Description: This 177-nucleotide RNA was probed chemically with DMS and 2A3. It was measured as part of the RMDB library OK2TRN. For 2A3 the reverse transcriptase was SuperScript II with manganese.
RNA sequence: GGGAACGACUCGAGUAGAGUCGAAAAGAGAUGCUGGUGUGUGUGUGUGUGUGUGUGUGCUGGUGCGCACACGCACAAGCAUAUGAGGAGAUCCUUCUGGGAAGAGGCUGGCCACAACCAGGCAGGGGAUGCAUAAGAUAUUCGUAUCUUAUGCAUCAAAAGAAACAACAACAACAAC
Reactivity to DMS in 0.01 (KOAc 150mM, MgCl2 10mM, bicine 150mM(pH8.5), 24C), signal-to-noise 9, nucleotides 027 to 126: g010a120g010a090u000g010c020u000g010g020u000g010u000g010u000g010u000g010u010g010u010g020u000g010u010g010u000g010u000g010u000g010c020u000g010g020u010g010c020g000c010a010c010a000c000g010c000a000c000a020a070g010c010a020u000a040u000g010a120g010g000a110g000a100u000c040c020u000u000c060u000g010g010g010a120a080g000a080g010g010c060u000g010g000c030c040a060c120a060a100c040c030a050g010g010c050a060g010g000g010
Reactivity to 2A3 in 0.01 (KOAc 150mM, MgCl2 10mM, bicine 150mM(pH8.5), 24C), signal-to-noise 9, nucleotides 027 to 126: g080a000g010a020u080g020c030u030g010g030u040g010u020g010u000g000u010g010u010g000u020g000u020g000u000g000u000g000u010g010u010g010c060u180g110g190u290g040c010g000c000a000c000a000c000g000c000a000c000a000a000g000c010a010u040a070u160g080a050g060g030a080g010a050u050c000c010u050u070c050u100g050g010g020a050a040g020a030g070g000c040u040g070g000c020c010a040c010a030a040c010c010a010g050g000c010a010g020g000g020